[RMDB]
RNA sequence: GGGAACGACUCGAGUAGAGUCGAAAAGAUAUGGAAGAACUUAUCCCGUGGCUUGUGGGAGCGAGUGAUCGGAAACGAUCACAUCGCGAAGAACACACUGGCCACGGGAUAAGUUCUUCCUAAGUCACCCAGUUUAUAUCUUCGGAUAUAAACUGGGAAAAGAAACAACAACAACAAC
Reactivity to DMS in 0.01 (KOAc 150mM, MgCl2 10mM, bicine 150mM(pH8.5), 24C), signal-to-noise 1, nucleotides 027 to 126: g000a050u000a300u020g000g000a010a000g050a010a030c000u000u000a010u000c010c000c000g030u000g000g000c000u000u010g010u010g000g000g010a290g000c010g000a040g020u010g010a000u000c010g020g030a100a150a260c000g000a000u000c000a010c000a080u000c020g020c000g010a090a170g030a150a240c160a170c010a010c300u000g000g010c000c020a000c020g000g000g000a000u000a010a000g010u010u000c000u000u000c010c000u000a000a070g000u010c010a230

Source: RMDB library TTRINS, as collected in RNAgym. This 177-nucleotide RNA was probed chemically with DMS. The DMS profile rests on 983 reads.